[RMDB]
RNA sequence: GGGAACGACUCGAGUAGAGUCGAAAAAAAAGUCAAAAUCUUUAGGGAUGUUACGGAAGUCUUGCGAGCAUUGUAUUCUGGCGGAUUCCUAGAUGAGCAUACAAAUGGUCGUCGCGAUGAAACAGGCCAAUCUGUAUCGGUUCGCCGAUACAGAUUGAAAAGAAACAACAACAACAAC
Reactivity to 2A3 in 0.01 (KOAc 150mM, MgCl2 10mM, bicine 150mM(pH8.5), 24C), signal-to-noise 1, nucleotides 027 to 126: a000a110a000a000g050u050c020a070a070a090a250u020c010u030u190u080a070g050g000g060a020u050g000u300u070a020c050g040g030a020a030g100u010c050u080u090g100c080g010a010g070c050a090u080u060g030u070a050u210u030c030u020g060g000c000g060g010a020u030u030c000c000u050a060g000a120u090g040a000g050c020a030u070a180c050a070a150a030u100g000g070u030c080g030u000c000g010c000g110a040u100g060a010a110a080c030a010g100g000c050
Reactivity to DMS in 0.01 (KOAc 150mM, MgCl2 10mM, bicine 150mM(pH8.5), 24C), signal-to-noise 4, nucleotides 027 to 126: a060a040a030a080g000u000c060a070a080a050a040u000c030u000u010u000a130g020g000g020a030u000g000u000u000a090c090g010g010a100a040g010u010c030u000u000g030c030g030a080g030c080a020u000u000g000u000a080u000u000c010u000g010g030c060g010g000a080u000u000c020c020u000a100g020a050u010g020a060g010c030a030u010a070c260a040a060a070u000g000g000u000c010g010u000c030g020c130g000a070u000g010a120a070a100c080a080g000g000c140
The record gives the reactivity of an RNA of 177 nucleotides to 2A3 and DMS.